[RMDB]
RNA sequence: GGGAACGACUCGAGUAGAGUCGAAAAGAGAUGUAGUUCGCUACAUCUCAAACAUAAACAUGAGAAAAUGCAACGGACGCACCGAAGCCAUAAAAGUAAAAAAAAGUACGUUGUUCGCAACGUACAACGUUCACUACAAGUUCGCUUGUAGUGAACGAAAAGAAACAACAACAACAAC
Reactivity to DMS in 0.01 (KOAc 150mM, MgCl2 10mM, bicine 150mM(pH8.5), 24C), signal-to-noise 2, nucleotides 027 to 126: g000a000g000a010u000g020u000a010g000u000u020c230g030c030u000a000c000a030u000c000u000c010a000a060a050c180a130u010a100a060a080c080a110u000g000a080g010a030a050a080a120u000g000c010a020a110c050g000g000a120c130g030c080a040c050c050g000a080a260g000c020c040a050u000a050a060a070a060g030u030a000a020a000a130a050a030a150a110g010u000a000c000g020u000u000g000u010u000c220g030c010a020a000c030g000u000a030c000a060a040
Reactivity to 2A3 in 0.01 (KOAc 150mM, MgCl2 10mM, bicine 150mM(pH8.5), 24C), signal-to-noise 4, nucleotides 027 to 126: g000a000g000a000u000g000u010a010g010u030u040c200g020c060u010a000c000a000u000c010u010c010a010a010a000c040a050u250a060a120a020c070a080u170g070a050g100a140a070a050a040u100g000c010a000a050c020g000g080a000c030g000c050a020c030c020g030a040a010g000c000c000a010u090a070a110a030a010g120u190a100a090a070a060a020a010a010a010g000u010a000c010g010u000u000g040u040u080c240g010c090a000a000c000g000u000a000c000a010a010

Source: RMDB library M2PK50, as collected in RNAgym. This 177-nucleotide RNA was probed chemically with DMS and 2A3. 2A3 adducts were read by reverse transcription with SuperScript II with manganese. The reactions ran in a buffer of 150 mM KOAc, 10 mM MgCl2 and 150 mM bicine (pH 8.5), at 24 C. For DMS the reverse transcriptase was MarathonRT.